[RMDB]
RNA sequence: GGGAACGACUCGAGUAGAGUCGAAAAAAGCGAUUGUAAAGUUUCGCCUGCGGUUUCGUAAUGCCGACGCAAUAAAAGGACGGGGAUUGUAUAUGUGUUCCUAUUCAAACAAUGCAAUUCCUAAAUGAGAGUUUUAGAUGUUCGCAUCUAAAACUCUAAAAGAAACAACAACAACAAC
Reactivity to 2A3 in 0.01 (KOAc 150mM, MgCl2 10mM, bicine 150mM(pH8.5), 24C), signal-to-noise 2, nucleotides 027 to 126: a030a000g060c090g040a080u000u120g040u040a050a080a050g030u050u070u030c020g010c000c000u020g050c000g040g000u010u100u150c070g090u180a080a070u080g000c000c010g020a070c030g000c040a000a090u220a230a050a050a060g050g050a010c000g000g000g000g000a000u000u000g000u090a000u000a110u040g030u000g040u090u000c010c000u020a070u230u110c030a010a000a190c000a000a000u000g020c000a000a000u000u000c000c030u010a010a040a050u200g070
Reactivity to DMS in 0.01 (KOAc 150mM, MgCl2 10mM, bicine 150mM(pH8.5), 24C), signal-to-noise 1, nucleotides 027 to 126: a000a020g040c050g010a060u000u030g000u000a000a140a070g010u010u000u000c000g000c010c010u000g040c070g010g000u010u000u090c090g030u030a070a050u010g000c040c080g000a190c090g000c060a060a090u060a040a010a120a110g000g050a020c170g030g000g000g000a020u000u060g010u000a010u030a030u000g010u010g030u030u000c060c120u000a040u120u010c180a030a100a070c040a000a030u000g000c010a000a040u000u000c000c000u020a000a090a160u090g020